RNA sequence: GGGAACGACUCGAGUAGAGUCGAAAACUCGCUGUUUUUGUGGCUGGCUUUCAGCGGGCUGGCGGAGCCGGGAGCGGAGGCGGAGGACCGAGCCAAAAACGUCAGCCGAGGCCGGGCGGCCCCGCUCAAAAUCUUCGUAUCUUCGGAUACGAAGAAAGAAAUAAUAAGGGUUCGCCCUUAUUAUUUCAAAAGAAACAACAACAACAAC
Reactivity to 2A3 in 0.01 (KOAc 150mM, MgCl2 10mM, bicine 150mM(pH8.5), 24C), signal-to-noise 1, nucleotides 027 to 156: c040u070c030g000c040u020g050u060u120u010u160u080g090u080g030g020c020u010g020g020c030u020u080u140c050a040g030c020g040g020g010c020u020g080g060c010g010g010a010g000c030c010g060g030g000a060g010c050g000g060a100g040g000c020g040g050a170g040g010a050c000c020g020a020g050c040c030a050a080a000a080a120c000g020u010c020a010g060c040c010g010a010g000g000c020c080g060g050g030c020g000g000c000c000c000c000g040c000u020c020a090a090a080a080u040c000u000u000c000g000u000a000u000c000u010u050c140g070g000a000u000a000c010g000a010a000g000a000a000a010
An RNA of 207 nucleotides, treated with 2A3 and read out base by base. 2A3 adducts were read by reverse transcription with SuperScript II with manganese. For 2A3, 643 sequencing reads were counted. The reactions ran in a buffer of 150 mM KOAc, 10 mM MgCl2 and 150 mM bicine (pH 8.5), at 24 C. Source: RMDB library M2RFPK, as collected in RNAgym. Reactivities are rounded to 0.1 and cut off at 0 and 3.